[RMDB]
RNA sequence: GGGAACGACUCGAGUAGAGUCGAAAACUAUCAGAUUCGUCUGAUAGAAAAAAGCGUACUACAAGGCGAAGAACAUGUUUGCAAUUCGUGCAUCCCAAAUAGGAUGCCGAAUCAUGGGAGCCUUGUAUCGCAAAAAAUCAGCUGUUCGCAGCUGAAACAUUCCCUCUUCCUUCGGGAAGAGGGAAUGAAAAGAAACAACAACAACAAC
Reactivity to DMS in 0.01 (KOAc 150mM, MgCl2 10mM, bicine 150mM(pH8.5), 24C), signal-to-noise 1, nucleotides 027 to 156: c000u010a000u000c000a010g000a080u010u000c300g010u000c030u030g000a000u020a020g020a000a020a090a120a060a210g000c030g000u000a060c110u010a030c010a000a030g020g030c000g020a170a210g000a090a100c030a040u010g010u000u010u000g030c100a040a090u010u000c010g000u010g050c010a030u010c000c000c000a060a200a150u000a010g010g010a000u010g030c000c030g050a010a000u000c030a020u000g000g010g010a300g020c000c010u000u000g000u000a000u000c010g000c010a000a020a080a130a090a180u000c010a020g010c020u010g030u000u010c270g030c000a060g000c000u000g010a050a060a220
Reactivity to 2A3 in 0.01 (KOAc 150mM, MgCl2 10mM, bicine 150mM(pH8.5), 24C), signal-to-noise 2, nucleotides 027 to 156: c000u010a000u000c000a000g020a060u010u160c190g060u010c080u000g000a010u010a000g020a140a050a000a000a000a010g010c020g000u060a070c040u010a000c020a020a000g010g020c020g210a220a010g010a140a020c010a000u050g080u200u220u300g140c160a140a090u030u020c040g140u230g080c000a000u030c030c040c060a110a220a040u260a070g000g010a000u010g000c010c000g010a000a020u120c000a000u000g020g000g020a030g020c010c010u000u000g000u010a010u020c010g000c000a000a100a000a000a000a110u030c000a000g000c010u020g070u050u130c250g000c180a000g000c010u010g000a030a000a000